Background: The record gives the reactivity of an RNA of 177 nucleotides to DMS and 2A3. It was measured as part of the RMDB library OK2TRN.
[RMDB]
RNA sequence: GGGAACGACUCGAGUAGAGUCGAAAAAAAUAAGUCCAUCCGACUUUUGGAAAAGGUGUUUUUUGAUACCACGAGAUUUGGGCAAGUUCGGCAAUAUGGAUUUGUAAUUGUACGACAAUAACCCAUAUAUCGUACCUAAGUUCGCUUAGGUACGAUAAAAAGAAACAACAACAACAAC
Reactivity to DMS in 0.01 (KOAc 150mM, MgCl2 10mM, bicine 150mM(pH8.5), 24C), signal-to-noise 3, nucleotides 027 to 126: a040a020a050u000a030a090g010u000c000c020a060u010c030c030g020a130c190u010u010u000u020g020g010a050a030a070a130g010g010u000g010u000u000u000u000u020u020g000a120u010a130c040c010a080c160g010a140g000a120u000u010u000g010g000g020c080a040a140g030u000u000c010g010g000c230a050a040u010a060u010g020g000a120u000u010u010g010u010a050a030u010u000g010u000a080c070g010a020c040a050a030u000a080a170c010c000c010a050u010a160
Reactivity to 2A3 in 0.01 (KOAc 150mM, MgCl2 10mM, bicine 150mM(pH8.5), 24C), signal-to-noise 2, nucleotides 027 to 126: a010a000a000u110a010a020g020u010c020c000a040u000c020c010g050a060c130u130u150u160u300g080g000a000a040a060a100g000g000u000g090u000u030u000u000u040u060g060a050u070a030c050c000a030c050g130a100g030a210u120u090u020g020g000g040c060a020a010g020u140u050c020g020g000c020a030a000u070a080u190g150g010a120u130u090u200g030u050a070a100u020u020g050u120a180c050g010a000c100a040a050u090a070a020c010c010c060a020u020a000